[RMDB]
RNA sequence: GGGAACGACUCGAGUAGAGUCGAAAACGCUCUAUACUGCCACUUGUGUGAGAAUACUUUUAGUACAAGCGAGUACACGCAGUAUACUGCUACUUGUGUGAGAAUACUUUUAGUACAAGCGAGUACACCACCAUACUGGCUUCGGCCAGUAUGGUGGAAAAGAAACAACAACAACAAC
Reactivity to 2A3 in 0.01 (KOAc 150mM, MgCl2 10mM, bicine 150mM(pH8.5), 24C), signal-to-noise 2, nucleotides 027 to 126: c020g000c000u060c000u000a000u010a030c000u010g000c040c040a050c000u080u130g010u140g000u110g100a170g150a040a080u120a050c000u020u050u110u220a050g000u000a040c060a080a000g000c010g010a000g000u100a000c090a000c060g040c000a000g000u000a040u000a030c020u010g110c000u060a090c040u090u070g000u000g010u000g170a060g040a130a020u170a150c080u070u030u060u150a060g020u000a010c020a050a080g080c070g030a000g000u000a020c000a010
Source: RMDB library OK1LIB, as collected in RNAgym.
The record gives the reactivity of an RNA of 177 nucleotides to 2A3.
The reactions ran in a buffer of 150 mM KOAc, 10 mM MgCl2 and 150 mM bicine (pH 8.5), at 24 C.
The 2A3 profile rests on 756 reads.
2A3 adducts were read by reverse transcription with SuperScript II with manganese.